RNA sequence: GGGAACGACUCGAGUAGAGUCGAAAAGAAAGUGUGCACUUGAUACCGCGUGACUUCGGUCACGUAGUGGCAGCGCGCAGGACUUUGCUGCCACUGCUUAGUCCUGGGGUAUCUUGUGCUCACGAAACGAUCCCGUCCCAUUCGUGGGACGGGAUCGAAAAGAAACAACAACAACAAC
Reactivity to 2A3 in 0.01 (KOAc 150mM, MgCl2 10mM, bicine 150mM(pH8.5), 24C), signal-to-noise 2, nucleotides 027 to 126: g170a030a060a020g000u000g010u000g030c000a000c010u000u000g000a000u000a000c010c000g040c010g050u040g020a020c000u030u070c240g100g000u040c010a000c010g010u000a000g000u000g020g010c000a000g000c030g040c090g000c090a090g000g110a060c090u140u100u230g010c000u000g020c000c000a040c000u010g000c010u020u100a010g040u050c020c030u070g010g030g010g010u010a000u000c000u000u000g000u000g000c010u000c000a000c000g000a090a020a000
Source: RMDB library OK1LIB, as collected in RNAgym.
Chemical mapping of a 177-nucleotide RNA with 2A3.
2A3 adducts were read by reverse transcription with SuperScript II with manganese.
The 2A3 profile rests on 1,467 reads.
High 2A3 reactivity points to a flexible backbone, as in loops and unpaired stretches.
The RNA was probed in 150 mM KOAc, 10 mM MgCl2 and 150 mM bicine (pH 8.5) at 24 C.
Reactivities are given for positions 27 through 126.